[RMDB]
RNA sequence: GGGAACGACUCGAGUAGAGUCGAAAAUGGGCAGAUGAUACAGUCUUUUCUUCCCUGCCGCAUAUUUUGGUGGCGUUGUCGAGGCACACACAUAGUUUAAAGUAUUAUUGUCCGGCAACGCAUAGGGCAGAAGAUACGUUUUCGAACGUAUCUUCUGAAAAGAAACAACAACAACAAC
Reactivity to DMS in 0.01 (KOAc 150mM, MgCl2 10mM, bicine 150mM(pH8.5), 24C), signal-to-noise 8, nucleotides 027 to 126: u000g010g010g010c050a030g010a070u010g010a130u010a150c190a150g010u000c050u010u010u000u010c090u000u000c020c020c000u010g010c010c010g030c160a080u010a080u000u000u010u000g030g040u000g010g010c010g000u000u000g010u000c010g010a120g010g000c020a030c300a110c180a060c150a060u000a060g010u000u000u010a090a080a200g010u000a040u000u000a090u000u000g010u000c010c000g000g010c020a010a000c010g010c020a020u000a020g020g000g010
Reactivity to 2A3 in 0.01 (KOAc 150mM, MgCl2 10mM, bicine 150mM(pH8.5), 24C), signal-to-noise 5, nucleotides 027 to 126: u050g000g000g000c010a020g020a130u120g020a030u150a220c040a060g080u050c000u060u120u020u010c020u030u030c010c010c010u000g000c000c040g060c080a130u090a210u160u210u090u130g130g000u090g030g040c010g000u000u000g000u000c020g020a220g030g000c000a030c000a000c010a010c010a090u070a120g090u070u110u250a150a160a020g070u050a050u170u040a080u100u060g010u000c000c000g000g000c000a000a000c000g000c000a000u020a010g010g020g000

This 177-nucleotide RNA was probed chemically with DMS and 2A3.
DMS adducts were read by reverse transcription with MarathonRT.
Reactivities are given for positions 27 through 126.
For 2A3 the reverse transcriptase was SuperScript II with manganese.
The reactions ran in a buffer of 150 mM KOAc, 10 mM MgCl2 and 150 mM bicine (pH 8.5), at 24 C.
High 2A3 reactivity points to a flexible backbone, as in loops and unpaired stretches.
For DMS, 9,664 sequencing reads were counted.